[RMDB]
RNA sequence: GGGAACGACUCGAGUAGAGUCGAAAAGUGGCGCGCAAAGGAAGGAAGCCGCGUCAGAAAGGAAGGGUGAAAACCCUGUUUCUCGCGGGCUUACUCCUGUUUCGCCUUCCACAAGCUCCCUGCCGCCUUUUGCCAGUUCGCUCCAGGUUUCCCCGGGCCUCACUUUAAUGUUCGCAUUAAAGUGAGGAAAAGAAACAACAACAACAAC
Reactivity to 2A3 in 0.01 (KOAc 150mM, MgCl2 10mM, bicine 150mM(pH8.5), 24C), signal-to-noise 2, nucleotides 027 to 156: g060u030g010g010c000g020c010g020c060a180a080a050g040g050a070a000g040g020a030a010g040c010c010g010c010g050u110c100a020g030a000a000a010g120g170a060a030g020g020g010u080g050a060a030a020a050c000c000c000u010g050u000u020u010c020u010c020g000c030g050g110g090c020u040u060a020c000u070c010c030u050g130u060u100u070c020g000c000c000u100u080c000c000a030c030a040a080g010c010u010c020c000c000u020g010c000c030g020c000c000u050u060u070u120g030c030c000a070g010u030u040c020g020c010u010c010c020a020g000g040u010u020u030c000c000c010c000g030g000g000
Reactivity to DMS in 0.01 (KOAc 150mM, MgCl2 10mM, bicine 150mM(pH8.5), 24C), signal-to-noise 2, nucleotides 027 to 156: g030u000g020g060c300g010c070g000c070a130a080a080g000g000a070a030g000g000a030a090g020c000c010g000c010g030u010c120a040g020a030a070a100g010g010a140a030g000g020g030u000g000a150a100a170a080c010c010c020u000g000u020u000u000c010u000c050g030c060g030g020g040c070u000u000a080c010u000c010c000u000g000u010u010u010c040g020c010c010u000u000c010c020a050c100a080a120g000c030u000c010c010c000u010g020c000c030g030c030c020u020u010u000u020g040c030c040a000g000u010u000c050g010c030u000c040c030a180g020g020u000u000u000c020c010c010c020g010g000g020

This 207-nucleotide RNA was probed chemically with 2A3 and DMS.
For 2A3 the reverse transcriptase was SuperScript II with manganese.
The DMS profile rests on 5,199 reads.
For DMS the reverse transcriptase was MarathonRT.
Values cover nucleotides 27 to 156.
It was measured as part of the RMDB library VIROID.
The 2A3 profile rests on 2,216 reads.